Notes:
Conditions: 150 mM KOAc, 10 mM MgCl2 and 150 mM bicine (pH 8.5), 24 C. Structure probing data (2A3) for a 207-nucleotide construct. Values are in units of 0.01, from 0 to 300, in steps of 10.

[RMDB]
RNA sequence: GGGAACGACUCGAGUAGAGUCGAAAAAGAUCCUCUCGGCAUCGCCCAUGUGCUCGAGUAAGGGUCUCAAAUUUAGUGGGAUACGUUAAACUUUUCCGUCUGUAAAGUUUAAAAGAGAUCAUCAGACUAGCAAUACAGAAUGCCUGUCACUCGGCAAGCUAGUGUGCAGGUUCGCCUGCACACUAGCAAAAGAAACAACAACAACAAC
Reactivity to 2A3 in 0.01 (KOAc 150mM, MgCl2 10mM, bicine 150mM(pH8.5), 24C), signal-to-noise 2, nucleotides 027 to 156: a000g010a050u070c000c000u000c000u000c000g000g010c000a000u000c010g010c010c000c010a020u030g000u000g000c090u100c190g000a000g030u030a100a100g050g000g000u020c050u000c090a130a180a030u150u300u230a040g000u010g000g010g000a000u000a000c000g000u000u000a010a000a000c000u000u010u010u010c000c070g000u020c000u000g010u010a000a000a000g000u000u000u020a000a010a000a020g020a020g010a070u300c050a000u010c010a020g010a000c000u040a080g020c170a160a140u140a240c020a030g220a210a180u060g000c010c000u030g070u150c030a140c180u050c020g030g000c020a050a000